RNA sequence: GGGAACGACUCGAGUAGAGUCGAAAAAGCCAUACCAUUACGAUGGUAUGGCAAGUCCGUGACGGCGAUGGAUCCCGCCUGGCCGAUGCCGAACUGCCGAUCUGGCUGAUGGUUCCUGCCCCGUCAGAAAACGUAAAGCACUUCGGUGCUUUACGAACUAUACAGGCAUCUUCGGAUGCCUGUAUAGAAAAGAAACAACAACAACAAC
Reactivity to DMS in 0.01 (KOAc 150mM, MgCl2 10mM, bicine 150mM(pH8.5), 24C), signal-to-noise 1, nucleotides 027 to 156: a120g000c000c000a010u000a000c010c000a020u000u000a120c300g050a190u000g000g000u000a030u000g040g040c000a000a020g030u000c010c030g000u000g000a080c000g030g030c050g000a210u000g000g000a040u000c010c010c110g010c000c010u000g020g060c000c020g000a070u000g020c030c010g000a110a100c110u000g030c030c000g000a100u010c030u000g050g000c010u000g010a110u000g020g000u000u000c010c030u000g010c070c040c030c000g020u000c020a100g000a080a060a130a160c010g020u000a000a000a040g010c010a000c000u000u000c280g020g020u000g050c000u000u000u010a000c010g000a030a100
Reactivity to 2A3 in 0.01 (KOAc 150mM, MgCl2 10mM, bicine 150mM(pH8.5), 24C), signal-to-noise 3, nucleotides 027 to 156: a000g000c000c010a010u000a000c000c000a010u050u060a070c240g060a030u010g010g020u000a000u000g010g000c000a010a010g030u040c010c010g030u030g010a010c010g010g030c080g040a030u050g010g010a000u060c020c000c000g000c010c030u030g000g020c020c010g060a040u110g070c050c030g160a150a120c110u170g010c030c010g070a080u020c080u100g000g030c030u060g040a150u150g000g000u040u020c000c010u050g010c020c010c000c010g000u000c000a010g100a040a070a010a020c010g000u000a000a000a000g020c010a000c010u030u150c300g090g000u010g000c000u010u000u000a000c000g000a000a000